[RMDB]
Record summary:
Structure probing data (2A3 and DMS) for a 177-nucleotide construct. 2A3 adducts were read by reverse transcription with SuperScript II with manganese. In probing experiments dimethyl sulfate is read out at A N1 and C N3, which are open when not base-paired. The reactions ran in a buffer of 150 mM KOAc, 10 mM MgCl2 and 150 mM bicine (pH 8.5), at 24 C. The DMS profile rests on 1,144 reads.
RNA sequence: GGGAACGACUCGAGUAGAGUCGAAAACUACAAUGUGAUAGCUCUAUUGGAGCCAUUAUCACUAGCACUCAUCCAGCUGAAUGAUCCUGUGAUACCUUUGAAGGGGGCAUUCAUGAGGCAUGUAGUGAUCACGCUUUCCAUUCGUGGAAAGCGUGAUAAAAGAAACAACAACAACAAC
Reactivity to 2A3 in 0.01 (KOAc 150mM, MgCl2 10mM, bicine 150mM(pH8.5), 24C), signal-to-noise 2, nucleotides 027 to 126: c000u110a080c030a000a190u170g010u020g000a010u010a030g030c000u030c020u060a300u200u300g130g000a000g000c010c040a100u070u110a010u020c040a000c050u030a040g060c020a040c080u010c020a030u000c050c030a030g080c080u040g000a010a000u030g020a120u080c000c000u140g060u050g210a080u120a170c040c040u200u200u210g080a100a080g080g020g000g000g000c000a000u050u000c000a010u110g000a000g020g040c040a000u000g020u040a020g000u010g020
Reactivity to DMS in 0.01 (KOAc 150mM, MgCl2 10mM, bicine 150mM(pH8.5), 24C), signal-to-noise 2, nucleotides 027 to 126: c020u000a090c190a090a100u000g000u000g020a000u000a040g000c020u000c020u000a130u010u040g020g000a000g020c000c300a110u000u000a010u000c010a100c020u010a140g020c070a050c030u000c010a060u000c030c000a080g000c180u000g010a040a020u010g000a020u020c030c020u000g000u000g010a150u000a120c210c140u000u040u010g000a190a190g000g000g000g000g050c000a000u000u000c000a030u010g030a180g000g020c190a060u000g040u000a000g010u010g010